[RMDB]
RNA sequence: GGGAACGACUCGAGUAGAGUCGAAAAGACAACAUCUCAGACAGUCUGGUCUUGUAUAUCUUAAUCAUGUUCUUAUGAAACUUGGAAACAUCUCUUCUAGUUUCACUAGUACCUUUAUUAAUUCUCUCAGGUACAGAUUUUGAAUUCGACGAUGCCGAGGGUAGAUAUCUUUCGAGAUAUCUACCCUAAAAGAAACAACAACAACAAC
Reactivity to 2A3 in 0.01 (KOAc 150mM, MgCl2 10mM, bicine 150mM(pH8.5), 24C), signal-to-noise 3, nucleotides 027 to 156: g090a010c030a080a010c010a090u050c060u060c070a020g010a060c020a010g040u010c030u020g000g050u010c030u030u070g090u040a110u020a030u120c070u040u060a060a020u030c040a020u050g020u070u000c000u030u050a030u050g000a000a000a010c010u030u140g030g070a030a100a050c090a300u120c090u010c000u080u040c020u000a010g010u000u000u010c010a020c020u010a020g010u020a010c020c030u100u060u080a060u110u100a160a080u210u030c080u010c020u010c070a020g050g000u100a080c000a020g030a020u080u080u080u160g090a100a120u110u060c010g030a010c010g020a000u060g060c070c040g180
Reactivity to DMS in 0.01 (KOAc 150mM, MgCl2 10mM, bicine 150mM(pH8.5), 24C), signal-to-noise 1, nucleotides 027 to 156: g020a080c010a090a030c000a240u010c010u000c040a170g030a240c080a170g000u010c040u000g040g030u000c040u000u000g030u000a120u010a110u000c020u010u010a030a080u000c050a060u000g000u000u010c030u000u010a080u000g000a040a020a050c020u000u020g050g000a070a060a140c090a130u010c080u000c060u000u010c020u000a040g010u000u000u000c000a090c030u030a080g010u000a010c000c030u000u000u000a070u040u000a150a150u010u000c050u000c140u000c110a010g040g030u000a070c020a040g010a060u030u000u000u000g020a110a200u000u000c020g020a060c090g010a040u000g000c010c070g030

An RNA of 207 nucleotides, treated with 2A3 and DMS and read out base by base. Source: RMDB library OK3TST, as collected in RNAgym. The 2A3 profile rests on 1,601 reads. Reactivities are given for positions 27 through 156.